[RMDB]
Structure probing data (2A3) for a 207-nucleotide construct. The 2A3 profile rests on 477 reads. 2A3 is a SHAPE reagent: it acylates the 2'-hydroxyl of flexible nucleotides of all four kinds.
RNA sequence: GGGAACGACUCGAGUAGAGUCGAAAACACAGACAUGAGAAGCCUGCAGAUCCAGAUGACCCCUUGCUGAUCAGAAUAUGAAAGAUCGAUAUGCGGAAACAAUGACCCCAUAGCAGAUGAGCUUCUAGAGCAGGCUUCAACCAUGGGUCAUCUGGAACUCGGUAAUACGGUUCGCCGUAUUACCGAGAAAAGAAACAACAACAACAAC
Reactivity to 2A3 in 0.01 (KOAc 150mM, MgCl2 10mM, bicine 150mM(pH8.5), 24C), signal-to-noise 1, nucleotides 027 to 156: c070a020c000a020g220a040c090a050u190g030a150g020a190a000g020c000c000u020g010c010a020g030a270u040c000c000a000g000a000u000g000a000c000c000c000c030u050u040g040c030u060g010a040u050c020a080g140a110a130u210a030u220g050a110a100a070g060a040u040c000g030a010u000a000u000g040c110g090g010a000a120a050c010a260a200u300g030a170c000c040c000c000a030u060a020g050c040a000g030a120u040g050a030g040c040u180u000c040u130a040g000a030g080c000a000g000g000c000u000u000c000a000a000c000c000a100u140g000g000g020u000c000a000u000c000u000g020g000a000a010